Chemical mapping of a 177-nucleotide RNA with DMS and 2A3. The DMS profile rests on 1,462 reads. DMS adducts were read by reverse transcription with MarathonRT. High 2A3 reactivity points to a flexible backbone, as in loops and unpaired stretches. Conditions: 150 mM KOAc, 10 mM MgCl2 and 150 mM bicine (pH 8.5), 24 C.

RNA sequence: GGGAACGACUCGAGUAGAGUCGAAAAUCCCUAGUCUUCGGACUAGGGAAAAGCCACGCCUGCAGCGCGCGGUCGCGGAGGGCAGGCGUCGCGCACUCGGCAAAACUUCAUGCUUCGGCAUGAAGAAGAAUAAAGCUGGGUUCGCCCAGCUUUAUUCAAAAGAAACAACAACAACAAC
Reactivity to DMS in 0.01 (KOAc 150mM, MgCl2 10mM, bicine 150mM(pH8.5), 24C), signal-to-noise 2, nucleotides 027 to 126: u000c000c000c000u000a000g000u000c000u000u020c160g010g010a010c010u000a000g000g000g010a000a030a040a140g000c020c030a010c080g000c000c010u000g030c050a100g010c040g000c030g020c150g020g000u010c090g030c020g000g030a240g020g010g000c010a030g000g010c000g050u000c120g010c020g020c060a180c020u000c040g020g030c100a120a040a120a180c000u000u000c000a000u000g000c000u000u000c210g010g000c000a000u010g000a000a000g010a020a110
Reactivity to 2A3 in 0.01 (KOAc 150mM, MgCl2 10mM, bicine 150mM(pH8.5), 24C), signal-to-noise 2, nucleotides 027 to 126: u000c000c000c010u000a000g010u000c010u020u070c300g080g000a010c000u000a000g000g000g000a020a100a000a020g000c010c000a050c020g000c000c000u070g010c020a070g050c030g050c010g000c100g300g130u300c120g000c020g030g160a180g020g170g000c020a010g000g020c020g010u010c000g000c010g000c020a070c050u040c020g090g070c060a010a050a060a120c010u000u000c000a010u000g000c000u010u060c200g090g000c010a000u020g000a010a010g000a020a000